[RMDB]
RNA sequence: GGGAACGACUCGAGUAGAGUCGAAAAUCGGUGGUGGCACUGGCUUAUCAGUUAUGGCUAGGGGAUUAAGAGAAUUCCCAAUUGAUAUUACGGCGAUUGUAACAGUUGCUGAUAAUGGUGGGAGUACUGUUAUAUGCACAUUCGUGUGCAUAUAACAAAAAGAAACAACAACAACAAC
Reactivity to 2A3 in 0.01 (KOAc 150mM, MgCl2 10mM, bicine 150mM(pH8.5), 24C), signal-to-noise 9, nucleotides 027 to 126: u130c030g020g020u080g020g030u090g040g020c020a000c040u020g020g000c020u060u090a100u140c030a050g050u090u110a090u170g050g000c030u020a050g020g000g010g020a030u120u080a140a020g070a020g040a080a070u070u040c020c000c020a010a040u070u090g030a040u050a020u160u070a020c010g010g010c030g050a050u040u070g130u110a160a050c020a120g010u030u010g020c000u010g070a130u030a050a030u050g070g010u030g010g010g010a050g030u050a060c020
Reactivity to DMS in 0.01 (KOAc 150mM, MgCl2 10mM, bicine 150mM(pH8.5), 24C), signal-to-noise 8, nucleotides 027 to 126: u010c070g000g010u010g010g020u010g010g000c100a100c040u000g010g010c060u000u010a080u020c100a120g030u010u010a060u020g010g000c030u010a080g020g010g010g000a150u010u030a100a110g010a110g010a090a080u010u000c000c000c000a040a070u030u030g000a080u030a040u010u010a040c030g010g000c020g000a020u000u010g010u030a160a100c160a040g010u000u000g000c010u000g000a110u010a010a010u010g000g010u000g000g000g010a070g000u000a080c150

Record summary
An RNA of 177 nucleotides, treated with 2A3 and DMS and read out base by base. Conditions: 150 mM KOAc, 10 mM MgCl2 and 150 mM bicine (pH 8.5), 24 C. For DMS, 30,541 sequencing reads were counted. 2A3 adducts were read by reverse transcription with SuperScript II with manganese. Source: RMDB library OK1LIB, as collected in RNAgym.